[RMDB]
RNA sequence: GGGAACGACUCGAGUAGAGUCGAAAACUCUGCUUGUAAACAUGCGUUAAAAAGAGGGGAAAUGUCAGUGAAUACCUGAGGCAGCGCCAAAACUAUUUUUUUUAAUGGCCACCAUGCUGCAGUAGAGCGUCAAGAAGGAGUUCGCUCCUUCUUGACGAAAAGAAACAACAACAACAAC
Reactivity to DMS in 0.01 (KOAc 150mM, MgCl2 10mM, bicine 150mM(pH8.5), 24C), signal-to-noise 3, nucleotides 027 to 126: c000u000c000u000g020c030u000u040g020u030a100a060a150c050a060u010g000c030g000u000u000a020a060a040a050a030g010a040g000g000g000g020a030a030a080u020g030u020c060a060g010u000g010a150a060u030a070c220c020u000g000a050g000g010c040a040g020c110g040c020c120a050a070a060a110c090u020a000u000u010u000u010u010u000u010u000a010a050u000g020g000c030c050a110c280c050a070u000g000c040u000g000c000a030g000u020a030g000a080g000
Reactivity to 2A3 in 0.01 (KOAc 150mM, MgCl2 10mM, bicine 150mM(pH8.5), 24C), signal-to-noise 4, nucleotides 027 to 126: c000u020c000u010g000c020u080u140g020u090a020a120a000c010a040u140g000c040g030u040u150a060a050a000a050a010g160a040g000g010g020g050a060a090a030u170g030u090c020a010g040u030g070a070a050u150a140c010c010u040g030a030g040g040c060a050g010c010g070c030c010a040a090a080a060c060u080a230u120u010u010u000u010u000u030u110a060a040u040g020g010c040c000a020c030c010a020u050g010c010u030g000c000a000g000u020a010g010a030g020